Structure probing data (DMS and 2A3) for a 177-nucleotide construct.
The RNA was probed in 150 mM KOAc, 10 mM MgCl2 and 150 mM bicine (pH 8.5) at 24 C.
For 2A3, 1,126 sequencing reads were counted.
[RMDB]
RNA sequence: GGGAACGACUCGAGUAGAGUCGAAAAACUGAUGCAGUGGGAGGCGACCGAUUGAAGCCAAUUGCAGACAUCAUGUGUGACUGAGUAUUGGUGUAGGCGAUAGCCUAAAAUCACCCGCCAGCAGAUACUUUAAAAGUCAGUUCGCUGACUUUUAAAGAAAAGAAACAACAACAACAAC
Reactivity to DMS in 0.01 (KOAc 150mM, MgCl2 10mM, bicine 150mM(pH8.5), 24C), signal-to-noise 2, nucleotides 027 to 126: a130c040u020g000a110u000g010c030a140g000u010g000g010g000a060g030g020c030g000a050c140c080g020a120u000u010g000a100a300g010c020c020a020a030u000u020g000c000a020g000a150c010a020u000c040a060u010g030u010g010u000g000a120c040u000g010a060g000u000a030u000u000g010g010u000g000u000a150g010g000c000g000a110u020a140g020c000c010u000a050a060a080a100u000c100a300c020c000c030g020c020c020a060g000c070a060g020a180u000a150
Reactivity to 2A3 in 0.01 (KOAc 150mM, MgCl2 10mM, bicine 150mM(pH8.5), 24C), signal-to-noise 1, nucleotides 027 to 126: a020c020u020g000a020u020g000c010a020g000u010g020g020g010a010g000g000c000g010a010c000c040g300a300u000u070g050a050a000g000c020c000a000a020u020u050g050c000a000g040a040c010a020u120c090a130u150g160u100g010u010g070a000c010u000g000a010g140u060a070u020u010g070g020u300g000u120a000g020g000c010g020a080u090a040g000c000c000u050a140a090a010a060u050c020a030c000c000c010g020c000c000a000g060c000a000g030a020u080a110